Chemical mapping of a 177-nucleotide RNA with 2A3 and DMS. DMS adducts were read by reverse transcription with MarathonRT. For DMS, 10,239 sequencing reads were counted. It was measured as part of the RMDB library OK1LIB. Conditions: 150 mM KOAc, 10 mM MgCl2 and 150 mM bicine (pH 8.5), 24 C.
RNA sequence: GGGAACGACUCGAGUAGAGUCGAAAAACUAGUCUUUGACCCAGAAUCAGCCCCGGUAAGGCCCACUCCAUAUGUCGACCAACAAAUCUUGGUAUUAUUGAGGCGCCGCACUUCGAUCGGCGGCAGCUCCUUUAACCGUUUUCGAACGGUUAAAGGAAAAAGAAACAACAACAACAAC
Reactivity to 2A3 in 0.01 (KOAc 150mM, MgCl2 10mM, bicine 150mM(pH8.5), 24C), signal-to-noise 7, nucleotides 027 to 126: a000c040u050a020g060u060c030u060u070u130g080a080c000c000c000a020g090a040a050u070c030a020g050c000c000c010c020g000g060u080a060a040g080g000c020c020c000a040c010u040c000c010a050u060a060u160g120u070c030g040a030c020c010a030a050c030a060a170a070u130c050u080u060g040g030u090a070u200u030a080u040u270g060a060g030g010c010g010c010c000g010c020a080c080u190u180c090g170a170u060c040g030g010c000g000g000c000a010g010c010
Reactivity to DMS in 0.01 (KOAc 150mM, MgCl2 10mM, bicine 150mM(pH8.5), 24C), signal-to-noise 5, nucleotides 027 to 126: a070c060u010a080g010u010c050u000u010u010g000a110c050c000c030a090g000a120a100u040c060a130g000c020c020c020c030g000g010u010a090a110g000g020c010c000c030a160c030u020c040c040a080u030a040u030g000u010c030g000a050c010c030a060a070c170a080a100a070u040c120u000u020g020g010u020a050u010u010a120u010u010g000a140g000g010c110g010c000c010g030c040a070c100u020u020c120g010a090u020c160g000g000c020g000g020c010a060g020c070